Structure probing data (DMS and 2A3) for a 177-nucleotide construct. High 2A3 reactivity points to a flexible backbone, as in loops and unpaired stretches. Values are in units of 0.01, from 0 to 300, in steps of 10. Conditions: 150 mM KOAc, 10 mM MgCl2 and 150 mM bicine (pH 8.5), 24 C. Source: RMDB library M2PK50, as collected in RNAgym.
[RMDB]
RNA sequence: GGGAACGACUCGAGUAGAGUCGAAAAGGAUGCUCGUUCGCGAGCAUCCACUGUGAUAGCCACUAUAAAGAUUAAGUCUUCCUACUCGAGACAGGAUGUCUAUGCUCCUGGCCUUCGGGCCAGGAAACACAACCAAUGUGUUCGCACAUUGGUUGUGAAAAGAAACAACAACAACAAC
Reactivity to DMS in 0.01 (KOAc 150mM, MgCl2 10mM, bicine 150mM(pH8.5), 24C), signal-to-noise 2, nucleotides 027 to 126: g000g010a030u000g000c000u000c000g020u000u010c200g030c000g060a020g000c000a010u000c010c000a010c110u010g000u010g010a180u000a130g000c120c060a070c100u000a110u010a100a050a070g000a100u000u000a060a090g000u000c010u000u000c080c000u000a020c010u000c000g010a010g000a060c100a170g020g000a130u000g010u000c010u010a040u010g020c150u000c000c000u000g000g020c010c020u000u000c210g020g010g000c010c000a030g000g000a000a010a110
Reactivity to 2A3 in 0.01 (KOAc 150mM, MgCl2 10mM, bicine 150mM(pH8.5), 24C), signal-to-noise 3, nucleotides 027 to 126: g020g000a000u000g010c000u000c010g000u020u050c250g030c010g080a000g030c010a000u000c010c010a010c000u060g010u030g070a080u090a080g120c100c020a010c020u160a080u120a260a130a030g100a070u160u150a140a000g090u040c010u030u000c010c000u000a030c010u000c010g040a020g040a090c060a050g110g050a120u140g080u060c030u120a110u150g110c020u040c010c000u000g000g000c030c010u000u050c220g060g000g030c000c000a010g000g000a000a000a000